This 207-nucleotide RNA was probed chemically with DMS and 2A3. For 2A3, 2,686 sequencing reads were counted. The data come from the RNA Mapping Database (RMDB), library M2RFPK. 2A3 adducts were read by reverse transcription with SuperScript II with manganese. Values cover nucleotides 27 to 156. Values are in units of 0.01, from 0 to 300, in steps of 10.

[RMDB]
RNA sequence: GGGAACGACUCGAGUAGAGUCGAAAAGUGCCUCGUCGGCCCGGCAUGCCGACCUGAUCCGAAGUUCAAGGUGGUUUCUCUGGCCUUCCAGAGAGAUGCGCGUCGGAAGAACCGACGAACAAACCUUAAAACAAAACGACGUUCGCGUCGUUUUGAAUCUAAUUCUAAUGUUCGCAUUAGAAUUAGAAAAAGAAACAACAACAACAAC
Reactivity to DMS in 0.01 (KOAc 150mM, MgCl2 10mM, bicine 150mM(pH8.5), 24C), signal-to-noise 2, nucleotides 027 to 156: g020u000g010c110c010u000c040g030u000c010g020g020c010c030c020g000g000c060a110u010g010c000c050g000a050c010c020u000g050a100u000c060c050g050a060a180g030u000u010c020a080a080g020g030u010g020g020u000u010u000c000u000c000u010g000g020c170c120u000u000c010c000a020g000a000g000a030g010a040u000g000c040g000c020g030u000c000g030g030a110a150g030a180a120c010c010g020a040c000g010a040a050c030a100a110a090c020c030u000u010a020a090a080a150c010a010a000a010a000c000g000a030c000g050u000u000c300g020c050g030u000c000g010u000u000u000u000g000a090a190
Reactivity to 2A3 in 0.01 (KOAc 150mM, MgCl2 10mM, bicine 150mM(pH8.5), 24C), signal-to-noise 3, nucleotides 027 to 156: g050u020g050c000c020u000c020g010u000c010g010g010c020c020c020g060g000c030a050u120g030c010c040g060a030c010c010u060g000a040u070c060c090g170a190a030g070u140u140c090a100a010g020g010u010g010g000u020u070u000c000u000c000u000g000g030c060c050u290u140c020c000a000g000a000g000a010g010a030u080g030c040g000c020g030u000c000g000g010a100a060g020a080a110c010c000g010a000c000g020a030a020c070a040a080a050c010c030u160u190a070a140a030a060c000a000a000a010a010c000g010a000c010g010u020u080c280g000c010g050u000c000g000u000u000u000u010g000a010a000